The record gives the reactivity of an RNA of 170 nucleotides to 2A3 and DMS. The 2A3 profile rests on 48,260 reads. For DMS the reverse transcriptase was MarathonRT.
[RMDB]
RNA sequence: GGGAACGACUCGAGUAGAGUCGAAAAUUGAAGGUAAAACAGCCUGUGGGUGAAACACACCCACAGGGCCCAUUGGGCGCUAGCACUCAGGUAUCACGGUACCUUUGUGCGCCUGUUUUACCGAAGGGCACCCUUCACUUCGGUGAAGGGAAAAGAAACAACAACAACAAC
Reactivity to 2A3 in 0.01 (KOAc 150mM, MgCl2 10mM, bicine 150mM(pH8.5), 24C), signal-to-noise 8, nucleotides 027 to 129: u100u130g070a070a010g010g000u000a000a000a000a000c000a000g000c000c000u000g000u000g000g010g000u020g030a030a100a010c130a010c000a000c050c000c000a000c000a000g000g000g000c000c000c010a060u270u300g000g000g000c010g000c080u110a050g000c000a000c000u000c010a000g020g000u000a010u010c030a020c230g150g010u010a010c000c000u000u000u000g000u000g000c000g010c000c000u000g000u000u000u000u000a010c000c000g000a000a000g010g010g000c030a060
Reactivity to DMS in 0.01 (KOAc 150mM, MgCl2 10mM, bicine 150mM(pH8.5), 24C), signal-to-noise 9, nucleotides 027 to 129: u030u030g010a160a120g010g010u010a010a030a010a020c000a020g000c040c020u000g020u000g040g020g000u000g000a100a140a090c210a160c030a030c050c010c000a040c000a000g000g020g020c000c010c010a080u040u100g040g000g000c000g020c060u060a100g030c000a010c000u030c010a010g010g010u010a000u000c040a080c300g080g020u000a000c020c000u000u010u030g010u020g040c000g020c010c000u000g030u000u000u000u000a010c050c000g000a040a060g000g000g000c190a140

For 2A3 the reverse transcriptase was SuperScript II with manganese. Conditions: 150 mM KOAc, 10 mM MgCl2 and 150 mM bicine (pH 8.5), 24 C.